[RMDB]
RNA sequence: GGGAACGACUCGAGUAGAGUCGAAAAAUAGGAGCAAGACCAUAGCGAUGGGGGGAGAUGCUAGGAGUCGGAGGAGACCGAAGCGAGGAGGAAAGCAAAGAAAGCAACGGGGCUAGCGAGUGGAUGUGUAGCACUCACUUCGGUGAGUGCAAAAGAAACAACAACAACAAC
Reactivity to DMS in 0.01 (KOAc 150mM, MgCl2 10mM, bicine 150mM(pH8.5), 24C), signal-to-noise 2, nucleotides 027 to 129: a110u040a060g010g010a070g050c000a100a060g010a050c060c020a000u150a060g050c060g030a060u070g060g060g040g000g040g030a040g040a040u040g020c210u050a040g020g010a090g060u000c120g000g010a060g020g010a090g000a000c060c020g010a040a020g000c000g030a050g000g000a060g000g030a010a010a030g020c300a070a020a000g020a090a000a080g050c110a050a090c000g090g010g000g010c000u000a100g020c050g020a020g080u060g040g010a080u040g000u080g020u020a120
Reactivity to 2A3 in 0.01 (KOAc 150mM, MgCl2 10mM, bicine 150mM(pH8.5), 24C), signal-to-noise 2, nucleotides 027 to 129: a010u210a030g000g000a000g040c030a080a000g080a050c000c010a070u110a010g070c040g040a060u050g030g000g010g000g000g010a010g000a000u070g000c010u020a040g060g000a040g000u060c040g020g030a010g000g040a010g020a010c010c010g000a000a000g040c020g010a010g030g000a000g030g030a040a020a000g000c000a010a000a120g060a100a090a020g030c010a060a050c030g000g000g000g060c020u040a020g000c010g030a000g070u030g020g040a020u030g090u010g030u180a000
The data come from the RNA Mapping Database (RMDB), library 15KLIB.
The record gives the reactivity of an RNA of 170 nucleotides to DMS and 2A3.
For 2A3 the reverse transcriptase was SuperScript II with manganese.
The reactions ran in a buffer of 150 mM KOAc, 10 mM MgCl2 and 150 mM bicine (pH 8.5), at 24 C.
As a SHAPE reagent, 2A3 marks flexible, mostly unpaired nucleotides at the ribose 2'-OH.